[RMDB]
RNA sequence: GGGAACGACUCGAGUAGAGUCGAAAAAGAAAGGUAUAUCAAAGAUCGAAAGAUCAACAAUGCUCGAUACAUAUACAUCCCAAAUGAAGUAACAAAUCGAGCAACUUCAACGGAAACGACAAAAAAAACGUAAGACUAGGUUCGCCUAGUCUUACGUAAAAGAAACAACAACAACAAC
Reactivity to 2A3 in 0.01 (KOAc 150mM, MgCl2 10mM, bicine 150mM(pH8.5), 24C), signal-to-noise 1, nucleotides 027 to 126: a000g080a000a180a000g110g000u020a050u000a000u080c050a020a050a120g020a000u000c000g030a060a000a090g020a010u070c020a050a030c110a090a120u020g000c000u050c020g000a000u030a070c090a020u040a010u000a000c020a110u020c010c000c000a010a030a000u160g000a060a010g000u040a170a020c050a030a120a080u000c000g000a000g080c000a000a030c010u050u000c050a040a030c010g110g050a130a070a020c040g130a040c230a000a190a020a040a000a000a000
Reactivity to DMS in 0.01 (KOAc 150mM, MgCl2 10mM, bicine 150mM(pH8.5), 24C), signal-to-noise 1, nucleotides 027 to 126: a120g000a040a100a040g020g000u000a000u000a130u000c050a040a120a150g040a120u000c010g000a050a080a140g010a000u000c000a140a070c130a000a090u000g010c010u000c000g040a000u000a090c160a000u000a010u000a010c000a080u000c000c000c000a060a040a150u010g030a000a030g000u000a020a080c130a080a120a070u000c020g000a000g000c000a060a050c030u000u010c060a160a230c160g020g020a070a030a080c010g000a150c150a010a000a100a000a070a050a080